[RMDB]
RNA sequence: GGGAACGACUCGAGUAGAGUCGAAAAGAUAUGGAUGUACUUCGAUAAGCUGCACUCGGAAACGAGUGGCAGCUUUUGACGAAGGUAGUCCUAAGUCGGCAUCCUUUUCUGUUCGCAGAAAAGGAAACACACGUUGUACCUUCGGGUACAACGUGUGAAAAGAAACAACAACAACAAC
Reactivity to DMS in 0.01 (KOAc 150mM, MgCl2 10mM, bicine 150mM(pH8.5), 24C), signal-to-noise 1, nucleotides 027 to 126: g040a050u000a300u010g010g000a010u000g010u020a300c000u010u010c000g020a110u000a000a040g020c000u010g050c000a040c000u000c000g000g000a140a090a090c000g030a010g010u000g020g010c000a000g020c000u000u000u000u010g000a150c140g010a000a010g010g000u020a300g000u000c000c000u020a070a150g000u000c010g050g000c150a220u000c000c000u000u000u000u000c000u000g000u000u010c140g000c020a010g000a000a000a000a000g000g010a000a020a100
This 177-nucleotide RNA was probed chemically with DMS. Source: RMDB library TTRDEL, as collected in RNAgym. The RNA was probed in 150 mM KOAc, 10 mM MgCl2 and 150 mM bicine (pH 8.5) at 24 C.